[RMDB]
RNA sequence: GGGAACGACUCGAGUAGAGUCGAAAAUGAAACAGCUAUCCUGCGCUACAGUGAGGGUUUGGAGAAGCUGAAGGACAUGAAAGUGCUGUACACCAACCGAGCCCAGGCUUAUAUGAAACUUGAGGACUAUGAGAAGGCACUGGUGGAUUGUGAGUGACAGUCCACCAGGAUUCGUCCUGGUGGACUGAAAAGAAACAACAACAACAAC
Reactivity to 2A3 in 0.01 (KOAc 150mM, MgCl2 10mM, bicine 150mM(pH8.5), 24C), signal-to-noise 2, nucleotides 027 to 156: u220g040a020a040a050c050a000g030c020u060a030u120c010c020u020g030c030g060c030u100a070c020a120g020u120g090a080g020g050g000u070u220u280g050g000a080g000a040a000g000c000u070g030a010a060g140g000a080c050a090u110g100a110a110a000g030u040g000c000u030g010u010a010c040a010c050c030a090a110c040c000g040a000g000c050c070c030a010g000g050c040u220u050a090u060a030u220g110a100a080a020c000u020u080g040a070g070g040a030c010u040a100u170g080a090g030a080a030g010g000c010a010c090u060g030g010u040g000g000a080u020u100g010u000g050a060g030u080g070a060
Reactivity to DMS in 0.01 (KOAc 150mM, MgCl2 10mM, bicine 150mM(pH8.5), 24C), signal-to-noise 1, nucleotides 027 to 156: u050g000a130a100a160c040a010g010c060u000a140u000c010c030u000g000c000g000c080u000a150c060a140g020u000g020a030g020g000g020u000u000u030g150g000a120g000a130a130g030c050u010g000a080a200g040g010a110c030a030u000g000a120a070a070g020u010g010c020u040g000u010a150c040a050c030c010a060a160c000c020g030a070g000c010c000c020a140g000g030c020u010u010a080u010a020u000g010a070a030a060c030u000u000g030a090g040g050a050c060u010a110u000g010a130g000a070a110g030g000c110a050c030u010g000g010u020g010g000a100u000u000g000u000g020a050g000u000g040a130